Background:
The data come from the RNA Mapping Database (RMDB), library M2PK50. An RNA of 177 nucleotides, treated with DMS and 2A3 and read out base by base. 2A3 adducts were read by reverse transcription with SuperScript II with manganese. The RNA was probed in 150 mM KOAc, 10 mM MgCl2 and 150 mM bicine (pH 8.5) at 24 C.
[RMDB]
RNA sequence: GGGAACGACUCGAGUAGAGUCGAAAAUUCAGCGCAUUCGUGCGCUGAAAAGCUGUACAACGCAUGUACACAAAACAAAACAAAAACAAAACAAAAAGCGUAGCAGGGUUCUUUUCGAAGAACCCAAGUACAUUUUAUUGUUCGCAAUAAAAUGUACAAAAGAAACAACAACAACAAC
Reactivity to DMS in 0.01 (KOAc 150mM, MgCl2 10mM, bicine 150mM(pH8.5), 24C), signal-to-noise 3, nucleotides 027 to 126: u010u010c000a000g030c000g030c000a040u010u020c200g020u000g010c010g010c000u000g000a000a020a030a080g030c120u000g010u000a010c020a030a100c050g000c050a130u000g000u000a030c010a030c050a090a040a120a120c120a040a040a070a090c140a030a080a090a070a090c090a070a060a080a070c030a080a100a120a110a110g000c080g010u010a110g010c200a130g030g000g000u000u000c000u000u000u000u030c140g020a010a010g000a000a000c000c000c010a000a000
Reactivity to 2A3 in 0.01 (KOAc 150mM, MgCl2 10mM, bicine 150mM(pH8.5), 24C), signal-to-noise 4, nucleotides 027 to 126: u010u010c010a010g000c000g010c010a010u030u070c190g100u040g010c000g010c000u010g000a000a000a000a000g000c060u000g010u030a010c020a060a030c070g020c070a130u040g010u020a010c030a000c020a010a060a030a030c050a020a110a020a000c070a040a110a080a020a010c050a030a170a020a020c040a030a160a030a060a020g030c030g070u100a040g080c140a080g020g000g000u010u000c000u020u040u080u150c160g040a000a000g000a000a000c000c000c000a000a000